[RMDB]
RNA sequence: GGGAACGACUCGAGUAGAGUCGAAAACACGCUGGUCAACACGCGAACUUCGUGGAACUAUCGCAGCUGUUCGUCGAGAAGCAGACGUUGUUCAUCUUGACAUCGUGCCGGGCUGGGGUGUGCCCACCCGCGAAGUUGUGUUCGCACAACUUCGCGGAAAAGAAACAACAACAACAAC
Reactivity to 2A3 in 0.01 (KOAc 150mM, MgCl2 10mM, bicine 150mM(pH8.5), 24C), signal-to-noise 2, nucleotides 027 to 126: c020a000c050g230c020u040g020g020u020c020a040a030c020a010c110g000c020g060a050a030c020u020u010c030g200u120g000g160a070a060c060u060a110u300c050g020c210a070g040c010u070g050u070u050c040g100u050c060g030a050g020a130a000g030c020a030g000a090c040g070u050u050g020u040u060c010a050u000c050u050u130g020a030c000a050u060c000g010u020g060c130c060g100g020g050c010u000g010g010g000g000u000g000u060g060c000c020c000a010c020
Reactivity to DMS in 0.01 (KOAc 150mM, MgCl2 10mM, bicine 150mM(pH8.5), 24C), signal-to-noise 1, nucleotides 027 to 126: c080a000c070g010c020u000g020g040u020c020a200a140c020a020c050g050c200g050a050a050c030u010u010c050g010u010g000g020a070a100c040u000a080u020c090g020c070a120g010c090u000g000u000u010c100g020u010c090g000a080g000a070a110g020c030a070g000a080c030g010u010u000g000u020u000c030a100u000c050u000u000g010a030c080a140u000c030g010u000g000c050c170g030g010g030c030u000g000g000g040g000u010g000u000g010c000c000c000a160c120